[RMDB]
RNA sequence: GGGAACGACUCGAGUAGAGUCGAAAACAUUCGACGGGAUGAUCCCCAUCAGUUGCGGCGGCACGCGGUGUGCCGCGAGUUGGUCCUCGACCGUCACCUUUUUGAUGUUCCAGAACUCAUCCUUCGCCAGGGAUAGGGACUUCGGUCCCUAUCCCUGAAAAGAAACAACAACAACAAC
Reactivity to DMS in 0.01 (KOAc 150mM, MgCl2 10mM, bicine 150mM(pH8.5), 24C), signal-to-noise 1, nucleotides 027 to 126: c090a100u000u000c050g020a080c040g000g000g000a060u020g000a120u010c020c000c000c070a120u010c120a060g010u000u020g000c040g000g000c000g020g020c000a000c010g060c200g010g010u010g020u000g000c010c000g020c020g000a030g000u000u000g020g010u000c020c010u000c060g010a110c030c020g010u010c050a130c080c010u010u010u000u000u000g020a090u000g000u000u000c000c000a120g020a060a080c080u000c070a060u000c030c040u000u000c090g000c220
Reactivity to 2A3 in 0.01 (KOAc 150mM, MgCl2 10mM, bicine 150mM(pH8.5), 24C), signal-to-noise 1, nucleotides 027 to 126: c070a050u100u140c020g000a010c050g010g080g040a030u070g000a080u020c010c020c010c000a030u070c010a030g260u230u160g300c080g040g000c030g000g020c050a010c030g080c130g130g150u250g000u070g100c000c030g020c000g000a000g010u030u060g020g020u040c020c040u070c060g060a070c010c000g070u030c010a000c020c010u140u150u000u070u170g080a080u110g030u100u000c030c030a040g030a040a000c020u010c010a030u100c020c000u140u110c020g040c150
Conditions: 150 mM KOAc, 10 mM MgCl2 and 150 mM bicine (pH 8.5), 24 C. An RNA of 177 nucleotides, treated with DMS and 2A3 and read out base by base. For 2A3, 723 sequencing reads were counted. The DMS profile rests on 1,162 reads.